The record gives the reactivity of an RNA of 177 nucleotides to 2A3 and DMS. The 2A3 profile rests on 909 reads. The RNA was probed in 150 mM KOAc, 10 mM MgCl2 and 150 mM bicine (pH 8.5) at 24 C. Values cover nucleotides 27 to 126.

[RMDB]
RNA sequence: GGGAACGACUCGAGUAGAGUCGAAAAAGCCAACAUGAACUUUAUGUAGAACAGUUAAAAAAGGCUCUAAAGACACGGGGAGUAAAGGUUAAGGGUAAUGAUUUACUCAAAUUCUUUGAUUUUGUAAUCUUGGACCAUAAUUCGUUAUGGUCCAAGAAAAAGAAACAACAACAACAAC
Reactivity to 2A3 in 0.01 (KOAc 150mM, MgCl2 10mM, bicine 150mM(pH8.5), 24C), signal-to-noise 2, nucleotides 027 to 126: a020g070c020c000a000a050c030a090u060g020a020a000c000u020u120u200a130u220g110u140a060g030a090a000c030a040g070u280u230a070a000a110a000a000a060g030g000c020u030c000u060a160a190a000g050a010c010a000c070g010g080g050g000a100g040u090a050a020a020g050g000u030u010a070a100g150g070g000u030a020a020u150g230a070u120u090u010a030c020u000c000a000a090a090u110u030c010u000u060u220g140a300u080u060u070u080g080u110a030a110
Reactivity to DMS in 0.01 (KOAc 150mM, MgCl2 10mM, bicine 150mM(pH8.5), 24C), signal-to-noise 2, nucleotides 027 to 126: a120g010c020c010a030a060c130a090u040g000a090a080c010u030u020u020a050u050g020u010a110g020a110a070c160a020g000u000u050a020a030a060a090a140a080g000g010c000u000c080u000a060a110a020g000a060c020a020c120g020g040g000g010a130g020u000a010a010a030g010g000u000u000a070a100g010g000g020u000a020a030u030g000a140u000u000u000a040c010u000c010a020a040a070u030u030c040u000u000u000g000a080u030u010u010u020g000u020a030a090